RNA sequence: GGGAACGACUCGAGUAGAGUCGAAAAGAUAUGGAUGUUUCGUGAAAGCGACGAUCUAAGAUCGGAAACGAUCUUAGGGAGCUUCACGGCAUCCUAAGUCAAAGGAAAAGUGUUCGCACUUUUCCAACUUCAGAGAUUGGUUCGCCAAUCUCUGAAGAAAAGAAACAACAACAACAAC
Reactivity to 2A3 in 0.01 (KOAc 150mM, MgCl2 10mM, bicine 150mM(pH8.5), 24C), signal-to-noise 3, nucleotides 027 to 126: g010a000u010a020u050g000g000a000u010g040u060u300u300c010g000u000g060a170a250a170g000c010g300a300c010g000a120u040c010u010a000a000g000a000u000c000g000g000a000a000a010c000g000a000u010c000u000u000a000g000g000g000a000g000c000u100u030c010a000c000g000g000c000a000u000c000c010u010a000a000g000u000c010a070a090a230g000g020a000a000a000a020g030u020g070u160u290c300g050c160a000c000u000u010u000u020c020c000a010a010
Reactivity to DMS in 0.01 (KOAc 150mM, MgCl2 10mM, bicine 150mM(pH8.5), 24C), signal-to-noise 2, nucleotides 027 to 126: g000a020u000a020u020g000g000a020u000g000u000u010u020c000g040u000g020a050a240a100g030c010g000a040c280g020a010u020c000u010a000a020g010a010u000c000g000g010a010a010a040c000g000a000u000c000u000u000a010g000g000g000a010g030c000u010u000c000a000c010g010g000c000a000u020c000c000u000a000a050g000u000c000a110a090a150g000g010a020a000a000a010g010u000g030u010u020c270g030c010a010c000u000u000u000u000c010c000a070a090
Chemical mapping of a 177-nucleotide RNA with 2A3 and DMS. The RNA was probed in 150 mM KOAc, 10 mM MgCl2 and 150 mM bicine (pH 8.5) at 24 C. The data come from the RNA Mapping Database (RMDB), library TTRDES.